[RMDB]
RNA sequence: GGGAACGACUCGAGUAGAGUCGAAAACCAGGAGUUUGAGACCAGCCUGGGCAAGACGGCGAAACCUUGUCUCUAUAAAAAAUACAAAAAUUAAUCAGGUGUGGUGGUGCACACCUGUAAUCACAGCUAUUUGGGUGGCUAUGGCAUGAGAAUCACAGUGAGUCGUAUGAUUCGUCAUACGACUCACAAAAGAAACAACAACAACAAC
Reactivity to 2A3 in 0.01 (KOAc 150mM, MgCl2 10mM, bicine 150mM(pH8.5), 24C), signal-to-noise 1, nucleotides 027 to 156: c010c000a000g050g040a070g030u130u230u220g010a040g010a010c020c000a000g060c020c010u060g000g000g040c010a020a060g030a050c030g050g000c040g030a060a010a010c000c000u010u050g010u040c010u000c030u090a060u180a050a110a010a030a030a030u140a010c060a050a060a050a070a030u110u070a060a050u130c010a010g000g000u000g000u000g020g050u010g000g040u040g020c000a000c000a000c000c050u080g010u000a020a020u060c020a020c050a080g020c030u040a020u110u060u090g040g000g000u010g000g000c020u010a060u110g040g000c010a020u090g030a040g010a100a050u140c070a030c040a140